This 177-nucleotide RNA was probed chemically with DMS and 2A3. Reactivities are given for positions 27 through 126.
RNA sequence: GGGAACGACUCGAGUAGAGUCGAAAAGCUGCCUCUGACGUCCUUCUCCCCCGGAAACGGGGCCGAAGGGUGGUAAGGCGUGUCGCCUGGCGCUGGCACGGGUAUGCGUGGCGGUCGACCCUGGCCGGGGUAUAGUAUCAUUCGUGAUACUAUACCCAAAAGAAACAACAACAACAAC
Reactivity to DMS in 0.01 (KOAc 150mM, MgCl2 10mM, bicine 150mM(pH8.5), 24C), signal-to-noise 9, nucleotides 027 to 126: g010c020u000g000c000c000u000c070u000g010a160c150g010u000c000c000u000u000c010u000c300c000c000c010c000g010g000a060a090a170c010g020g000g020g040c050c060g000a020a010g000g010g010u000g010g010u010a120a050g010g010c020g010u000g010u000c050g020c020c020u000g010g010c080g010c030u000g010g010c020a040c040g010g000g010u010a040u010g010c040g010u010g010g010c020g010g010u000c020g000a120c030c020c040u000g010g010c020c060g020
Reactivity to 2A3 in 0.01 (KOAc 150mM, MgCl2 10mM, bicine 150mM(pH8.5), 24C), signal-to-noise 7, nucleotides 027 to 126: g010c010u010g000c000c010u080c150u200g070a040c010g020u010c000c010u010u000c010u060c010c000c000c000c000g000g000a010a010a000c000g010g000g020g000c010c010g000a000a000g010g000g000u020g020g040u060a030a010g040g020c030g000u010g020u020c040g030c020c020u090g150g000c090g010c080u100g040g000c030a020c040g070g000g070u190a080u290g050c070g020u050g060g040c010g010g010u060c030g040a160c000c000c030u040g050g000c030c010g030